[RMDB]
RNA sequence: GGGAACGACUCGAGUAGAGUCGAAAAGAUAUGGAACUUCCAGGGAGUUACUUCGGAAACGAACUAACGAAGAACUGGAGUUCCUAAGUCAAACGAGCAAUUGGUUCUUCGGAACCAAUUGCUCGAAGAUGAGGGAUUAGUUCGCUAAUCCCUCAUCAAAAGAAACAACAACAACAAC
Reactivity to DMS in 0.01 (KOAc 150mM, MgCl2 10mM, bicine 150mM(pH8.5), 24C), signal-to-noise 2, nucleotides 027 to 126: g030a030u000a300u010g000g010a020a020c000u000u000c000c010a010g000g000g000a120g020u000u000a010c160u010u000c010g030g000a070a080a180c000g010a020a020c080u000a020a030c000g000a160a130g050a180a160c010u000g000g020a050g000u000u000c000c000u000a030a040g010u000c030a080a090a250c020g000a000g000c000a000a000u010u000g010g010u000u010c010u010u020c140g040g010a000a000c000c000a000a010u000u000g000c000u000c000g000a010a030
Reactivity to 2A3 in 0.01 (KOAc 150mM, MgCl2 10mM, bicine 150mM(pH8.5), 24C), signal-to-noise 1, nucleotides 027 to 126: g000a020u050a050u180g000g020a010a000c020u300u050c120c000a000g060g000g040a060g000u030u010a030c020u000u030c000g000g060a070a100a070c010g020a010a000c020u010a000a000c000g280a300a080g020a100a020c010u000g000g000a000g010u000u010c000c000u020a060a000g040u030c040a060a060a140c020g000a010g000c010a000a000u000u020g050g000u000u000c000u080u110c300g030g000a010a000c000c000a020a000u000u010g000c020u000c000g000a000a000